[RMDB]
RNA sequence: GGGAACGACUCGAGUAGAGUCGAAAAAAUAGUACGACCAAUGUCUUACCACUACGAUCAUUGUGAAGAUAUAAUUGAUCAAUUCUUACUUGGAGACAGAAUUAUAGUGGCUCCAGCUCUUCAUAAAGCCUAUACUGCUAUUCGUAGCAGUAUAGGCAAAAGAAACAACAACAACAAC
Reactivity to 2A3 in 0.01 (KOAc 150mM, MgCl2 10mM, bicine 150mM(pH8.5), 24C), signal-to-noise 3, nucleotides 027 to 126: a000a020u170a000g030u040a000c020g040a000c010c060a060a050u070g020u030c030u030u050a030c030c020a040c050u090a020c090g050a020u040c040a100u060u000g010u030g060a080a050g080a020u110a020u010a190a110u130u080g030a040u050c020a030a080u160u000c030u070u100a100c040u040u080g010g000a000g010a010c010a030g180a140a020u300u120a110u110a190g130u050g040g010c000u000c000c000a000g000c020u020c000u030u060c000a010u130a090a030a080
Reactivity to DMS in 0.01 (KOAc 150mM, MgCl2 10mM, bicine 150mM(pH8.5), 24C), signal-to-noise 2, nucleotides 027 to 126: a040a070u010a110g000u020a130c130g020a040c020c160a160a070u000g000u000c030u010u010a090c070c010a030c100u020a100c150g010a030u020c070a080u020u010g010u000g010a060a010g010a050u000a100u000a080a070u000u010g020a050u000c020a090a110u000u000c080u000u000a090c150u000u010g000g010a020g000a040c050a100g010a060a090u000u000a070u000a090g000u000g010g010c010u000c040c050a070g000c190u010c030u000u020c040a030u020a010a080a130

This 177-nucleotide RNA was probed chemically with 2A3 and DMS.
It was measured as part of the RMDB library OK2TST.
Values cover nucleotides 27 to 126.
The DMS profile rests on 1,037 reads.